Chemical mapping of a 177-nucleotide RNA with 2A3 and DMS.
It was measured as part of the RMDB library OK2TRN.
Reactivities are given for positions 27 through 126.
For DMS, 613 sequencing reads were counted.
Conditions: 150 mM KOAc, 10 mM MgCl2 and 150 mM bicine (pH 8.5), 24 C.

RNA sequence: GGGAACGACUCGAGUAGAGUCGAAAACUUCAUUGAAGGAAGCCAAGACAGGAACUCAAGCAGGGUAGGAGGCAGGAACUGAAGCAGAGGCUGCUGAGGAACACUGCCUACUCUCUUGCUCUUCAUGGUCGAGAAGGGAUUUCGAUCCCUUCUCGACAAAAGAAACAACAACAACAAC
Reactivity to 2A3 in 0.01 (KOAc 150mM, MgCl2 10mM, bicine 150mM(pH8.5), 24C), signal-to-noise 1, nucleotides 027 to 126: c030u050u010c050a140u080u160g030a050a050g050g030a060a020g080c010c010a050a000g130a080c050a080g080g040a130a070c020u050c190a030a070g000c000a010g030g030g040u110a010g000g020a000g050g000c000a000g000g020a000a020c010u030g000a020a000g020c050a010g130a130g300g100c040u020g000c000u000g000a030g000g030a020a000c080a010c070u000g000c030c000u000a010c010u000c010u000c010u000u030g000c000u040c020u020u030c020a080u130g090
Reactivity to DMS in 0.01 (KOAc 150mM, MgCl2 10mM, bicine 150mM(pH8.5), 24C), signal-to-noise 1, nucleotides 027 to 126: c030u040u000c060a160u030u000g010a120a010g000g000a100a050g000c050c050a060a030g000a100c150a070g000g040a100a060c130u020c130a030a040g000c070a030g000g000g000u040a070g000g000a030g000g000c000a010g000g070a020a300c000u000g020a230a000g010c000a020g010a160g030g040c050u000g020c000u020g000a300g000g000a020a130c080a300c010u000g000c000c000u010a000c030u000c020u000c020u000u000g010c050u000c020u000u000c030a010u000g000